[RMDB]
RNA sequence: GGGAACGACUCGAGUAGAGUCGAAAAAAAAGAUAUGGACGAACUACCCACCGUACCGCAGACGAUGAAACUAGGUCGGAAACGACCUAGUGGAGUCUGUGGUACGAGGUUCGUCCUAAGUCAAAAACAUCUUCUAGAAGUUCGCUUCUAGAAGAUGAAAAGAAACAACAACAACAAC
Reactivity to 2A3 in 0.01 (KOAc 150mM, MgCl2 10mM, bicine 150mM(pH8.5), 24C), signal-to-noise 2, nucleotides 027 to 126: a040a000a020a010g070a030u090a030u070g000g000a000c000g020a010a010c000u110a180c030c110c060a030c020c000g000u000a000c010c000g000c010a000g000a010c010g300a300u010g000a020a000a000c000u000a010g000g000u010c010g000g000a000a010a000c000g000a000c000c010u000a000g000u000g010g000a000g000u000c010u000g000u000g000g020u000a000c010g000a000g020g000u000u010c000g000u000c000c000u000a010a000g000u010c030a010a010a030a060a110
Reactivity to DMS in 0.01 (KOAc 150mM, MgCl2 10mM, bicine 150mM(pH8.5), 24C), signal-to-noise 4, nucleotides 027 to 126: a080a040a120a130g000a070u010a140u010g000g010a010c010g000a010a010c020u000a120c070c020c060a300c080c000g000u000a000c000c000g020c000a010g010a010c000g000a100u020g000a080a140a010c000u010a000g000g020u000c010g000g010a030a030a130c010g020a020c010c000u000a000g000u000g000g010a030g020u010c000u000g020u000g000g010u000a000c000g010a020g020g000u000u010c010g010u010c000c000u000a010a040g010u020c050a050a080a100a110a170